[RMDB]
RNA sequence: GGGAACGACUCGAGUAGAGUCGAAAAGAUAUGGACAACUCAUGAGUUGGCUUGGACCUCGGAAACGAGCUAGCCAACCAUGAGGUUGUCCUAAGUCAAAACCCAAGAGUGUUCGCACUCUUGGGAAGUAUCCCGUUGACUUCGGUCAACGGGAUACAAAAGAAACAACAACAACAAC
Reactivity to DMS in 0.01 (KOAc 150mM, MgCl2 10mM, bicine 150mM(pH8.5), 24C), signal-to-noise 1, nucleotides 027 to 126: g000a080u000a300u000g060g000a020c000a000a060c000u000c000a010u030g010a130g020u000u000g000g020c010u010u000g000g020a180c300c020u010c020g000g000a110a140a190c000g000a010g000c020u000a040g010c000c030a010a010c000c000a000u000g000a010g010g000u010u000g030u000c000c000u010a000a050g010u010c020a120a070a190a120c000c000c000a000a020g000a020g030u000g010u000u030c170g020c000a000c000u000c000u000u000g000g000g000a000a010
Reactivity to 2A3 in 0.01 (KOAc 150mM, MgCl2 10mM, bicine 150mM(pH8.5), 24C), signal-to-noise 1, nucleotides 027 to 126: g040a040u150a070u170g000g000a000c010a000a000c000u000c000a020u020g040a070g300u000u010g030g000c000u080u150g080g110a280c020c010u000c000g020g000a030a080a070c020g020a000g050c000u030a010g000c000c000a000a000c010c000a000u060g000a000g000g000u020u020g000u000c000c000u000a050a010g000u000c040a060a020a030a150c040c010c020a000a000g010a010g000u090g000u070u250c220g090c120a030c020u000c000u030u010g000g000g030a020a030